[RMDB]
RNA sequence: GGGAACGACUCGAGUAGAGUCGAAAACAAGGAGUUCGCUCCUUGAAAAAGAUAUGGACAUCUCGAAGGAGGCCAGAGAGGUCGGAAACGACUACCCACCUCUGGCUACCCACCCUUCACGAUGUCCUAAGUCAAAAAACAGUAGUUCGCUACUGAAGUUGUUCCUAUGAUUCGUCAUAGGAACAACAAAAGAAACAACAACAACAAC
Reactivity to DMS in 0.01 (KOAc 150mM, MgCl2 10mM, bicine 150mM(pH8.5), 24C), signal-to-noise 1, nucleotides 027 to 156: c010a010a010g000g070a000g040u000u000c300g010c000u000c000c000u000u040g000a000a150a020a080a120g060a200u000a270u000g010g000a000c010a010u000c000u040c080g010a050a060g000g000a210g030g000c010c020a000g000a060g020a160g020g030u000c010g010g050a170a190a240c000g000a020c000u000a010c000c040c100a300c120c040u010c010u000g030g040c000u000a000c000c050c050a300c290c040c030u060u010c060a080c130g000a000u060g000u030c000c000u000a030a090g000u010c010a040a060a040a240a050a160c120a060g000u030a010g030u000u010c300g000c000u000a000c000u000g000a060a180
Reactivity to 2A3 in 0.01 (KOAc 150mM, MgCl2 10mM, bicine 150mM(pH8.5), 24C), signal-to-noise 4, nucleotides 027 to 156: c010a000a010g010g010a010g010u100u150c170g150c120u000c000c000u010u000g000a060a030a010a010a010g070a050u100a050u140g000g000a000c010a000u000c040u070c190g000a000a010g000g000a000g000g010c000c000a000g000a010g000a010g000g000u020c020g020g030a080a080a030c030g020a000c000u110a140c030c020c030a050c000c000u000c000u000g000g000c000u000a030c020c020c010a050c010c000c000u010u000c030a020c080g000a000u000g000u000c000c000u000a030a010g000u000c020a030a020a020a100a040a050c010a000g040u050a000g010u050u100c200g000c170u010a010c010u030g070a100a040
Structure probing data (DMS and 2A3) for a 207-nucleotide construct. Conditions: 150 mM KOAc, 10 mM MgCl2 and 150 mM bicine (pH 8.5), 24 C. For DMS the reverse transcriptase was MarathonRT. Source: RMDB library RNAMAK, as collected in RNAgym. 2A3 adducts were read by reverse transcription with SuperScript II with manganese.